RNA sequence: GGGAACGACUCGAGUAGAGUCGAAAACUUAUGAAUCUAACCCCUAUACUUGUAUAGGCGAUUAAUAAAUCUUCUGUAAAUGCUGUAAGAGGAUUACCCCUUGCGGUUUCAGCACUAGGCUGCUCUAUAAAGUCGGGAUGGUUCGCCAUCCCGACAAGUAAAUUAAUGUCUUCGGACAUUAAUUUACAAAAGAAACAACAACAACAAC
Reactivity to 2A3 in 0.01 (KOAc 150mM, MgCl2 10mM, bicine 150mM(pH8.5), 24C), signal-to-noise 1, nucleotides 027 to 156: c020u150u160a070u210g080a130a070u090c070u080a070a130c020c040c000c000u040a050u020a070c040u080u280g050u070a020u000a020g010g020c030g100a090u130u090a090a110u080a120a160a080u050c090u200u000c020u090g090u120a130a130a070u070g000c020u030g020u040a020a030g010a070g060g020a070u030u130a080c000c030c020c000u000u000g040c040g030g030u000u160u120c020a020g000c020a040c080u060a060g180g020c020u040g000c020u030c040u040a130u070a080a200a000g000u000c000g000g020g010a000u000g010g030u040u000c060g030c030c010a000u000c000c000c010g000a000c000a000a000